[RMDB]
The record gives the reactivity of an RNA of 177 nucleotides to 2A3 and DMS. For DMS, 3,692 sequencing reads were counted. The data come from the RNA Mapping Database (RMDB), library M2PK90. The reactions ran in a buffer of 150 mM KOAc, 10 mM MgCl2 and 150 mM bicine (pH 8.5), at 24 C.
RNA sequence: GGGAACGACUCGAGUAGAGUCGAAAAAUUUACGACUCUCAAGCGAAGCGAGUGCUAGCAUGCUCGAUAGCACUAAACAAAACAGGAAACUGAAAAUCGAGCAAUCGCUAGAGUCGUUCGCAUACAAAUCUUGAAAUAUAUUCGUAUAUUUCAAGAUAAAAGAAACAACAACAACAAC
Reactivity to 2A3 in 0.01 (KOAc 150mM, MgCl2 10mM, bicine 150mM(pH8.5), 24C), signal-to-noise 4, nucleotides 027 to 126: a000u100u110u110a070c010g000a000c010u000c000u000c020a040a010g010c000g050a060a010g060c050g100a080g120u150g040c000u010a010g020c030a050u060g010c010u010c020g020a020u030a020g060c020a010c060u140a040a060a030c060a030a070a010a010c020a000g030g040a140a030a030c030u030g050a080a080a010a090u030c020g000a000g010c000a020a090u030c040g000c010u020a030g000a000g020u000c010g000u000u000c000g010c030a050u120a110c050a030a230
Reactivity to DMS in 0.01 (KOAc 150mM, MgCl2 10mM, bicine 150mM(pH8.5), 24C), signal-to-noise 4, nucleotides 027 to 126: a140u010u000u010a140c010g030a020c000u000c000u000c030a200a090g010c020g010a040a120g010c060g010a060g010u000g000c020u010a060g000c060a300u000g020c040u000c040g000a030u000a060g020c060a050c050u010a060a100a130c150a080a070a110a130c020a010g010g000a070a090a170c010u010g010a080a040a120a070u000c040g000a030g000c020a040a070u000c050g000c000u000a120g000a010g000u000c000g000u000u000c010g010c040a100u020a120c110a090a060